[RMDB]
RNA sequence: GGGAACGACUCGAGUAGAGUCGAAAAGGUGAGCCGAUGAGGUGGCUAGAAGACCACGCGCACCGACCAUUCCGCGUGCGGUGCCUCCCGCAGUUCACCGGAGGGAUCGACCACCAACGUCAGCAACCUAAAUCGGCUAGUUCGCUAGCCGAUUUAGAAAAGAAACAACAACAACAAC
Reactivity to 2A3 in 0.01 (KOAc 150mM, MgCl2 10mM, bicine 150mM(pH8.5), 24C), signal-to-noise 5, nucleotides 027 to 126: g040g010u040g010a020g010c010c020g040a130u090g050a040g000g040u030g010g000c020u050a080g070a180a010g060a160c000c040a010c020g100c020g000c010a030c010c020g080a070c020c040a110u240u060c080c040g040c040g020u040g050c020g010g040u060g050c000c010u030c020c020c010g050c050a070g070u090u090c010a040c080c020g020g030a020g030g020g020a040u050c010g050a070c000c010a000c000c010a090a030c020g100u050c020a020g030c030a040a080c000
Reactivity to DMS in 0.01 (KOAc 150mM, MgCl2 10mM, bicine 150mM(pH8.5), 24C), signal-to-noise 2, nucleotides 027 to 126: g030g000u000g000a160g030c010c030g020a080u020g000a230g030g020u010g020g030c030u010a160g000a110a170g020a180c150c010a020c010g020c020g020c020a060c100c050g020a100c090c080a130u020u020c130c040g000c060g030u020g010c040g000g000u010g000c030c020u000c010c020c040g000c160a060g010u030u030c040a090c110c150g000g000a100g000g000g000a120u040c030g000a210c020c050a100c050c050a030a100c130g000u020c030a040g000c030a200a030c080